[RMDB]
RNA sequence: GGGAACGACUCGAGUAGAGUCGAAAAGAUAUGGACCAGGUUCCUCUGAUGACCUUGGUCGGAAACGACCAAGCAAGGAGCGAACUGGUCCUAAGUCAAAACAGUCUCUUCUUCGGAAGAGACUGAAGGCAAUUUAUUGGUUCGCCAAUAAAUUGCCAAAAGAAACAACAACAACAAC
Reactivity to 2A3 in 0.01 (KOAc 150mM, MgCl2 10mM, bicine 150mM(pH8.5), 24C), signal-to-noise 1, nucleotides 027 to 126: g000a000u060a060u180g000g010a000c000c040a040g300g160u120u020c010c000u060c010u050g300a300u110g010a150c020c010u010u010g040g000u000c030g010g020a090a120a030c030g010a000c010c010a020a000g000c020a100a270g000g020a010g030c250g010a010a010c010u010g050g010u060c010c010u000a010a010g000u000c010a000a000a100a240c010a020g000u000c010u020c000u000u000c000u000u100c260g250g000a040a000g010a000g000a000c000u020g000a000a000
Reactivity to DMS in 0.01 (KOAc 150mM, MgCl2 10mM, bicine 150mM(pH8.5), 24C), signal-to-noise 1, nucleotides 027 to 126: g010a020u010a300u000g000g000a030c000c010a010g010g000u000u000c010c010u000c000u010g030a080u000g000a160c300c030u000u000g000g020u010c000g030g010a070a190a180c010g040a030c020c000a000a000g030c000a080a130g000g000a010g000c190g010a000a010c000u010g000g000u000c000c000u000a030a050g020u000c040a090a090a060a300c020a000g000u000c000u000c010u000u000c000u000u000c220g120g020a030a000g000a010g020a030c000u000g000a050a040
An RNA of 177 nucleotides, treated with 2A3 and DMS and read out base by base. As a SHAPE reagent, 2A3 marks flexible, mostly unpaired nucleotides at the ribose 2'-OH. Conditions: 150 mM KOAc, 10 mM MgCl2 and 150 mM bicine (pH 8.5), 24 C. The data come from the RNA Mapping Database (RMDB), library TTRDES. The 2A3 profile rests on 1,640 reads.